Chemical mapping of a 177-nucleotide RNA with DMS and 2A3. For 2A3 the reverse transcriptase was SuperScript II with manganese.
RNA sequence: GGGAACGACUCGAGUAGAGUCGAAAACAGCAGAUGCAGCACCGCGUUGGUCGAGCCGCCGAACGCCAUUACCACCGCGAUGGCGUUCUCGAACGCCUCCUUGGUGAGGAUGUCGCGGGCGGUGAUGACCGACAUACCCGUUCGCGGGUAUGUCGGUAAAAGAAACAACAACAACAAC
Reactivity to DMS in 0.01 (KOAc 150mM, MgCl2 10mM, bicine 150mM(pH8.5), 24C), signal-to-noise 5, nucleotides 027 to 126: c090a080g000c030a050g000a070u020g010c030a070g020c040a120c050c020g000c100g000u010u000g000g020u000c030g000a280g000c060c010g010c030c030g020a040a140c040g000c000c000a010u000u000a120c030c020a050c020c020g010c190g010a020u010g000g000c000g000u000u000c010u020c160g020a050a040c040g000c000c010u000c020c030u020u030g020g010u030g010a050g000g010a050u020g010u020c060g010c250g030g010g010c010g000g010u000g010a150u030g000
Reactivity to 2A3 in 0.01 (KOAc 150mM, MgCl2 10mM, bicine 150mM(pH8.5), 24C), signal-to-noise 6, nucleotides 027 to 126: c010a000g060c010a010g040a130u130g050c020a010g040c010a040c050c010g020c040g070u070u100g050g030u030c020g030a030g020c000c000g000c000c020g030a070a010c010g010c010c000a010u020u030a190c030c020a020c020c020g030c050g030a020u070g010g000c000g000u010u010c010u010c020g050a070a010c020g020c000c000u020c010c020u120u230g120g010u230g050a080g000g030a080u090g030u060c070g000c060g050g010g000c000g000g000u020g030a090u110g040
The RNA was probed in 150 mM KOAc, 10 mM MgCl2 and 150 mM bicine (pH 8.5) at 24 C. For 2A3, 5,797 sequencing reads were counted. For DMS the reverse transcriptase was MarathonRT. Source: RMDB library OK1LIB, as collected in RNAgym.